[RMDB]
RNA sequence: GGGAACGACUCGAGUAGAGUCGAAAAGGGGGACCUCGUAAACGUGUUAUGUUAUGGAUGCGGGUUAUUCCCUUCUUUAGCAAAUCUACGUAUCGCUUCACGAGAAGCUUUCCGCAAACCUUUUAGCCAUGCGACUACUGUUCGCAGUAGUCGCAUGAAAAGAAACAACAACAACAAC
Reactivity to DMS in 0.01 (KOAc 150mM, MgCl2 10mM, bicine 150mM(pH8.5), 24C), signal-to-noise 2, nucleotides 027 to 126: g030g030g000g000g010a020c110c010u020c020g030u000a020a060a020c020g020u020g000u050u000a060u040g000u030u020a030u010g000g020a060u000g010c050g000g010g040u000u020a230u010u000c000c000c010u010u040c030u000u000u020a030g020c080a030a030a110u030c010u110a050c060g000u020a040u000c090g000c050u010u020c040a100c230g040a070g000a100a020g000c070u000u000u000c020c000g000c170a060a140a190c070c000u000u000u000u010a070g010c230
Reactivity to 2A3 in 0.01 (KOAc 150mM, MgCl2 10mM, bicine 150mM(pH8.5), 24C), signal-to-noise 7, nucleotides 027 to 126: g020g000g000g010g030a040c030c010u030c000g040u030a030a160a010c020g010u030g070u130u150a160u200g070u050u080a020u050g060g000a020u040g030c140g030g020g000u100u100a080u170u170c020c000c000u040u050c010u010u040u040a020g020c000a030a070a100u000c040u100a050c050g060u070a050u180c080g010c150u110u090c070a030c100g020a030g000a180a010g000c000u000u020u040c060c020g060c100a080a070a180c030c000u100u070u090u190a040g030c030